Structure probing data (2A3 and DMS) for a 207-nucleotide construct. The DMS profile rests on 3,561 reads. The data come from the RNA Mapping Database (RMDB), library M2RFPK. The reactions ran in a buffer of 150 mM KOAc, 10 mM MgCl2 and 150 mM bicine (pH 8.5), at 24 C.
RNA sequence: GGGAACGACUCGAGUAGAGUCGAAAAAGUUAGGUUCGCUAUGGUGCAACUCUUUAAGGCAAUAACGAACUAAUUCGAAGCAAGUAAUGGAGAAAUGCCAGGGUCACUAUCUAGCCAUAAUAGUGCUGUAAGUGACUUAGAUUCGUCUAAGUCACAAACUACCGGUACUGUUCGCAGUACCGGUAGUAAAAGAAACAACAACAACAAC
Reactivity to 2A3 in 0.01 (KOAc 150mM, MgCl2 10mM, bicine 150mM(pH8.5), 24C), signal-to-noise 4, nucleotides 027 to 156: a000g080u090u030a060g020g100u050u030c020g000c040u020a020u080g060g100u070g040c080a110a110c060u060c060u150u180u210a100a030g040g010c020a030a020u070a130a020c030g030a000a000c040u040a030a020u090u100c060g020a060a020g030c030a030a030g070u130a090a060u150g080g000a070g050a080a060a010u060g020c040c020a060g000g000g040u040c010a000c020u020a030u080c010u020a020g020c010c020a010u030a190a060u080a090g080u080g040c050u020g070u140a180a080g000u010g010a000c000u000u000a000g000a010u020u030c110g010u000c190u010a000a000g000u000c000a000c020a010a030
Reactivity to DMS in 0.01 (KOAc 150mM, MgCl2 10mM, bicine 150mM(pH8.5), 24C), signal-to-noise 2, nucleotides 027 to 156: a150g000u000u010a050g040g000u000u000c020g020c020u000a020u000g010g060u000g040c030a100a120c080u000c090u000u000u010a110a070g030g040c000a110a030u000a020a060c020g000a020a070c020u000a040a160u010u010c030g020a100a100g000c010a050a130g010u010a080a100u000g020g000a100g010a090a070a080u000g020c020c010a080g000g000g000u000c050a040c050u000a060u010c050u000a100g030c020c050a050u000a070a090u010a070g020u010g000c050u030g000u000a070a130g000u000g010a010c000u000u010a000g000a050u000u000c300g050u000c000u010a010a010g000u000c000a010c000a020a090